About this RNA:
Structure probing data (DMS and 2A3) for a 177-nucleotide construct. For DMS the reverse transcriptase was MarathonRT. Values cover nucleotides 27 to 126. The reactions ran in a buffer of 150 mM KOAc, 10 mM MgCl2 and 150 mM bicine (pH 8.5), at 24 C. Source: RMDB library OK2TST, as collected in RNAgym. For 2A3 the reverse transcriptase was SuperScript II with manganese. For 2A3, 1,803 sequencing reads were counted.

[RMDB]
RNA sequence: GGGAACGACUCGAGUAGAGUCGAAAAAGGAAUUCAACUACCCAACCGUCAAUGGCCAAACAAGGUUUUGACGAAAGCUCCACGCUGGCUUUCUACGGACUUGCGUGAUGGUAAUCAGGCUUUACCAUCGACUACCUAUGUUCGCAUAGGUAGUCGAAAAAGAAACAACAACAACAAC
Reactivity to DMS in 0.01 (KOAc 150mM, MgCl2 10mM, bicine 150mM(pH8.5), 24C), signal-to-noise 2, nucleotides 027 to 126: a060g000g010a140a070u040u010c160a110a090c060u010a140c000c010c010a120a110c190c030g020u020c020a000a060u010g030g010c000c010a020a090a160c250a110a140g000g010u010u000u000u010g010a030c030g020a070a040a020g020c030u000c090c010a060c070g000c030u000g010g020c040u010u000u000c070u000a070c170g010g000a030c060u010u010g000c060g040u000g000a070u000g000g010u000a010a030u000c110a160g020g020c070u020u020u000a040c000c020a070
Reactivity to 2A3 in 0.01 (KOAc 150mM, MgCl2 10mM, bicine 150mM(pH8.5), 24C), signal-to-noise 2, nucleotides 027 to 126: a000g070g010a040a030u230u120c040a020a050c020u080a080c020c010c000a010a060c040c000g000u020c010a020a060u180g030g010c030c010a140a200a160c060a190a270g010g000u020u040u040u050g000a000c000g010a030a020a000g000c000u040c040c000a000c020g000c040u010g020g010c020u040u080u020c040u050a040c100g060g070a070c050u080u060g000c020g040u040g030a030u030g000g000u040a060a020u080c090a080g150g040c000u020u030u030a030c010c000a030